[RMDB]
RNA sequence: GGGAACGACUCGAGUAGAGUCGAAAAGAGACGCAUCAGCUCGUCACUGAGAUGUACGAGUCGAUCAGGAAGUCGGCAGCGGUGCAGUACUACGAGCCCACCGACUGGCAGUUCGCCCGCAUGACCCUCUACAUGCUCAACCAGGAGCUAAUCGCCGAGUCCUUAGAAGGUUCGCCUUCUAAGGACUAAAAGAAACAACAACAACAAC
Reactivity to 2A3 in 0.01 (KOAc 150mM, MgCl2 10mM, bicine 150mM(pH8.5), 24C), signal-to-noise 2, nucleotides 027 to 156: g060a020g020a010c060g000c100a080u040c040a020g010c000u000c010g080u050c060a040c090u100g030a050g020a100u050g030u040a020c100g010a000g030u070c020g010a070u030c020a010g100g110a120a020g020u040c000g010g000c090a040g000c050g030g000u060g000c080a030g070u070a090c090u050a040c100g070a000g020c010c010c000a000c000c000g030a060c030u010g000g020c010a040g050u120u150c050g010c000c000c040g100c020a040u060g050a140c000c020c010u000c020u020a020c000a020u080g100c000u000c030a050a140c040c040a030g020g000a010g010c030u030a050a010u060c060g030c050c010g030
Reactivity to DMS in 0.01 (KOAc 150mM, MgCl2 10mM, bicine 150mM(pH8.5), 24C), signal-to-noise 1, nucleotides 027 to 156: g010a120g030a070c030g000c100a130u000c000a000g000c000u010c090g060u010c080a130c060u020g020a010g010a190u000g000u000a020c120g020a030g010u000c070g000a070u000c000a150g000g000a060a100g040u020c010g040g000c060a080g040c060g000g060u000g000c030a220g000u010a120c090u010a160c050g010a140g000c020c000c060a140c040c010g020a060c040u000g000g010c050a060g030u000u000c090g010c000c010c060g000c070a080u000g000a130c010c020c000u010c040u000a050c020a000u000g040c030u000c020a100a110c050c040a100g020g000a030g040c040u000a060a060u000c000g000c020c020g020
This 207-nucleotide RNA was probed chemically with 2A3 and DMS. For 2A3, 1,642 sequencing reads were counted. The reactions ran in a buffer of 150 mM KOAc, 10 mM MgCl2 and 150 mM bicine (pH 8.5), at 24 C. The DMS profile rests on 2,619 reads. The data come from the RNA Mapping Database (RMDB), library OK3TST.